This 177-nucleotide RNA was probed chemically with DMS and 2A3.
Conditions: 150 mM KOAc, 10 mM MgCl2 and 150 mM bicine (pH 8.5), 24 C.

[RMDB]
RNA sequence: GGGAACGACUCGAGUAGAGUCGAAAAGAAUGGCAAACCGCUGCCCAAGGCUGCCGUGUUCGCCGAAGCCCAGGCCGCAGUUGUCGCCCACGGCGUCGCCCGCCAUCUCGGUUACGACGUAGCUGAGCGACAAGCCAACUUUCGAGUUGGCUUGUCGAAAAGAAACAACAACAACAAC
Reactivity to DMS in 0.01 (KOAc 150mM, MgCl2 10mM, bicine 150mM(pH8.5), 24C), signal-to-noise 2, nucleotides 027 to 126: g010a110a060u050g030g030c020a040a060a110c030c020g020c030u010g000c000c020c100a160a160g020g000c030u020g010c100c030g000u020g010u010u030c040g000c030c010g000a060a060g000c020c030c010a150g030g000c010c010g000c110a150g010u010u000g000u020c020g000c000c000c020a120c050g010g000c010g020u000c080g000c030c060c050g010c210c100a110u010c080u000c010g000g010u030u020a010c040g020a130c080g010u000a070g020c010u020g030a000g000
Reactivity to 2A3 in 0.01 (KOAc 150mM, MgCl2 10mM, bicine 150mM(pH8.5), 24C), signal-to-noise 2, nucleotides 027 to 126: g020a030a040u140g070g000c060a020a010a090c020c020g000c040u020g000c010c000c000a050a090g040g000c020u010g090c050c010g040u080g020u030u100c070g010c010c020g020a040a000g020c010c000c000a010g010g010c000c000g010c000a020g010u090u060g060u030c020g050c000c050c010a020c030g030g000c000g020u070c020g030c010c000c000g060c010c010a100u040c010u000c010g000g010u040u040a060c200g080a120c110g110u010a000g040c050u020g030a000g040

2A3 adducts were read by reverse transcription with SuperScript II with manganese. The DMS profile rests on 2,507 reads. Source: RMDB library OK1LIB, as collected in RNAgym. For 2A3, 1,783 sequencing reads were counted.